[RMDB]
RNA sequence: GGGAACGACUCGAGUAGAGUCGAAAACAUCCACUGCUACGGCAGUGGAUGAACGAGGUAGGUACGCCUACCUCGAAAGCGGGAUGUCCGCAUAGACAUUAAACGUCCAUGGUACGCCAUGGACGAAGUCACUUUUACGAUUCGUCGUAAAAGUGACAAAAGAAACAACAACAACAAC
Reactivity to 2A3 in 0.01 (KOAc 150mM, MgCl2 10mM, bicine 150mM(pH8.5), 24C), signal-to-noise 3, nucleotides 027 to 126: c000a000u020c010c000a000c000u000g000c000u030a060c180g140g000c000a000g000u000g010g000a000u000g000a010a010c020g000a000g010g010u000a010g000g000u030a000c220g060c040c000u000a010c000c000u010c000g000a020a010a010g020c010g030g190g020a060u040g040u030c010c000g010c030a040u140a030g040a000c010a010u040u070a090a130a030c010g000u000c000c000a010u000g000g030u070a060c270g030c030c000a000u000g000g020a000c000g000a010a000
Reactivity to DMS in 0.01 (KOAc 150mM, MgCl2 10mM, bicine 150mM(pH8.5), 24C), signal-to-noise 3, nucleotides 027 to 126: c010a020u010c000c000a000c000u000g000c000u000a080c300g030g020c000a000g050u000g010g000a000u000g000a010a130c020g020a000g000g010u000a000g010g020u010a080c270g000c010c000u000a000c000c000u030c010g010a020a050a110g010c010g020g010g000a020u000g000u010c010c010g020c020a110u010a080g000a020c040a010u000u000a060a110a140c030g010u000c000c000a000u000g010g000u000a140c270g020c000c000a010u000g000g010a000c000g000a010a040
Structure probing data (2A3 and DMS) for a 177-nucleotide construct. The DMS profile rests on 2,704 reads. For 2A3, 9,431 sequencing reads were counted. The data come from the RNA Mapping Database (RMDB), library OK2TRN. Values cover nucleotides 27 to 126.